[RMDB]
Background
Chemical mapping of a 207-nucleotide RNA with 2A3. The data come from the RNA Mapping Database (RMDB), library M2RFPK. Conditions: 150 mM KOAc, 10 mM MgCl2 and 150 mM bicine (pH 8.5), 24 C.

RNA sequence: GGGAACGACUCGAGUAGAGUCGAAAACGGCAUGAUACCACCGUUAUCGGGUCAACAGAGUAGUUGCAAAUGACAAAAAUGCUCAGGGUUAUGCUCUCGCUGCCUAAUGGCGGUGCGGGAAACCCACAAAAGAUAUUGAUCUUCGGAUCAAUAUCAACCCCAUACGACAGUUCGCUGUCGUAUGGGGAAAAGAAACAACAACAACAAC
Reactivity to 2A3 in 0.01 (KOAc 150mM, MgCl2 10mM, bicine 150mM(pH8.5), 24C), signal-to-noise 2, nucleotides 027 to 156: c000g030g000c050a030u110g000a010u030a020c000c020a000c000c000g130u080u120a010u060c050g000g000g070u000c010a030a060c030a040g080a050g000u070a000g020u070u080g030c000a030a160a150u130g010a110c000a010a160a030a030a030u080g010c020u040c120a070g010g000g010u080u070a140u300g050c000u000c000u000c010g010c000u010g000c000c030u300a300a100u100g000g000c000g020g090u000g000c020g020g050g040a070a000a000c040c000c000a050c020a010a040a000a000g000a010u020a010u000u000g000a010u020c010u020u060c110g040g000a000u000c000a000a000u000a000u020c000a010a010
The 2A3 profile rests on 751 reads. Reactivities are given for positions 27 through 156.